About this RNA: The record gives the reactivity of an RNA of 177 nucleotides to 2A3 and DMS. Source: RMDB library RFM100, as collected in RNAgym. The 2A3 profile rests on 540 reads. For 2A3 the reverse transcriptase was SuperScript II with manganese. The RNA was probed in 150 mM KOAc, 10 mM MgCl2 and 150 mM bicine (pH 8.5) at 24 C.
[RMDB]
RNA sequence: GGGAACGACUCGAGUAGAGUCGAAAACGGUAACAGACUAAGAAGGGAACUGCAGAACCCAAAUUAGAAAGAAACCACAGGCAGAGAACAGAAGGGUGAAAGUUCAAGCAAGCUAGCCGGCAAAAAAAUGCGGGAAUAUGUUCGCAUAUUCCCGCAUAAAAGAAACAACAACAACAAC
Reactivity to 2A3 in 0.01 (KOAc 150mM, MgCl2 10mM, bicine 150mM(pH8.5), 24C), signal-to-noise 1, nucleotides 027 to 126: c080g030g000u000a090a010c000a060g160a090c000u000a040a000g080a090a070g070g000g040a120a000c000u140g000c070a040g010a300a240c060c000c070a090a120a150u020u020a010g010a010a100a000g000a000a100a000c000c010a000c000a000g040g040c000a020g010a000g000a120a000c000a080g050a120a030g080g040g000u000g100a000a140a000g010u040u050c040a010a020g000c020a000a000g000c000u010a000g000c010c000g100g010c060a200a000a000a000a000a000
Reactivity to DMS in 0.01 (KOAc 150mM, MgCl2 10mM, bicine 150mM(pH8.5), 24C), signal-to-noise 1, nucleotides 027 to 126: c120g000g000u000a000a300c000a150g000a300c030u060a040a020g000a170a240g030g000g020a070a110c090u000g070c130a070g000a040a110c110c010c000a000a150a300u040u030a000g000a000a200a190g000a130a140a100c020c000a010c130a170g000g010c000a030g000a010g000a130a090c070a000g000a070a000g000g010g090u000g000a000a090a040g020u010u000c000a060a010g000c010a000a040g070c100u070a010g000c000c110g000g040c100a000a000a020a120a050a020